[RMDB]
RNA sequence: GGGAACGACUCGAGUAGAGUCGAAAAAGUGACGAGUCUCCGCGGCGUCUAAGUGCCGGAAGUCAUCAUCCACGGUGUGCCAUGUACUUGGGAAUGGUAGCGGGAUUGCAUGUAAUACGGGUACUCCAAUCCCAACAAGAUUCGUCUUGUUGGGAUUAAAAGAAACAACAACAACAAC
Reactivity to DMS in 0.01 (KOAc 150mM, MgCl2 10mM, bicine 150mM(pH8.5), 24C), signal-to-noise 9, nucleotides 027 to 126: a100g010u010g010a050c080g000a070g010u010c040u010c010c040g020c040g010g010c030g010u010c140u010a090a110g010u000g020c010c060g010g000a060a100g010u000c020a020u000c040a070u000c050c040a110c090g010g010u010g020u000g000c020c010a040u000g010u010a070c140u000u000g020g010g010a120a050u010g000g010u010a160g020c050g000g000g000a050u000u000g010c120a030u000g010u000a070a100u010a170c060g000g010g000u000a060c070u010c060c130
Reactivity to 2A3 in 0.01 (KOAc 150mM, MgCl2 10mM, bicine 150mM(pH8.5), 24C), signal-to-noise 6, nucleotides 027 to 126: a000g120u080g040a030c040g010a020g020u000c020u000c070c020g030c040g070g020c020g030u100c130u160a140a070g060u050g110c010c010g020g020a060a020g050u030c000a030u030c000a010u010c030c020a130c110g070g010u140g020u080g040c020c010a040u060g020u140a150c070u110u160g060g010g110a120a090u050g030g030u030a020g070c030g000g000g050a030u040u160g030c080a020u040g020u140a050a010u060a140c040g020g020g000u000a020c010u020c030c010